An RNA of 177 nucleotides, treated with DMS and read out base by base.
RNA sequence: GGGAACGACUCGAGUAGAGUCGAAAAAUGGGUUCCAGAAGAUACGAUUCCAGGACAACAAUUUUCUCCCCUGAGGGACGUCUAUAUCAGGUUGAAUACGCGCUAGAAUCCAUUUCACAUGCAGGUAGACCUAUGGUGCAUUCGUGCACCAUAGGUCAAAAGAAACAACAACAACAAC
Reactivity to DMS in 0.01 (KOAc 150mM, MgCl2 10mM, bicine 150mM(pH8.5), 24C), signal-to-noise 1, nucleotides 027 to 126: a020u010g000g000g010u010u000c000c070a060g010a090a130g010a150u000a080c110g010a240u000u000c010c050a090g000g010a030c040a110a200c190a090a100u000u000u020u020c090u010c050c040c010c080u000g010a040g000g000g000a040c240g010u000c080u000a060u000a090u040c070a060g010g020u060u020g050a060a040u000a030c110g030c200g010c020u000a070g010a070a070u000c000c010a040u000u000u000c050a030c160a060u000g040c110a080g000g000u010a090